[RMDB]
This 177-nucleotide RNA was probed chemically with 2A3 and DMS. For 2A3, 108,104 sequencing reads were counted. It was measured as part of the RMDB library OK1LIB. The RNA was probed in 150 mM KOAc, 10 mM MgCl2 and 150 mM bicine (pH 8.5) at 24 C. 2A3 adducts were read by reverse transcription with SuperScript II with manganese.
RNA sequence: GGGAACGACUCGAGUAGAGUCGAAAACUCCAGCUGGGUCGAAGCGUGUGUCGAUACAGAGAUCUGACUUGAUGCUAUCCACAAGCACACCUCAAUAGUGUGGGAGCACGCACAUAAAGUCAAGCACGAUGAUGAGAUCUUUCGAGAUUUCGUCAUCAAAAGAAACAACAACAACAAC
Reactivity to 2A3 in 0.01 (KOAc 150mM, MgCl2 10mM, bicine 150mM(pH8.5), 24C), signal-to-noise 9, nucleotides 027 to 126: c010u010c000c010a040g010c010u040g010g010g040u020c020g030a070a020g030c050g060u070g020u020g030u040c020g010a010u030a110c020a020g070a010g020a110u050c060u050g050a060c010u030u080g020a060u040g080c010u040a090u150c020c010a050c020a080a050g070c020a030c010a030c040c030u160c070a130a190u140a240g070u030g000u020g030g020g000a010g030c030a010c070g040c040a040c010a070u230a080a090a010g030u030c040a040a010g070c060a030c140
Reactivity to DMS in 0.01 (KOAc 150mM, MgCl2 10mM, bicine 150mM(pH8.5), 24C), signal-to-noise 9, nucleotides 027 to 126: c070u010c010c030a110g010c010u000g010g000g020u000c020g020a040a080g020c100g010u010g010u010g010u010c030g000a050u010a050c050a030g000a110g000a090u020c100u020g000a040c010u000u000g000a120u010g010c030u010a100u010c020c010a060c090a070a140g020c040a040c050a040c040c060u010c210a100a100u040a120g010u000g010u000g000g000g000a060g010c060a030c110g010c080a110c220a110u030a110a040a020g000u000c010a040a080g020c190a100c160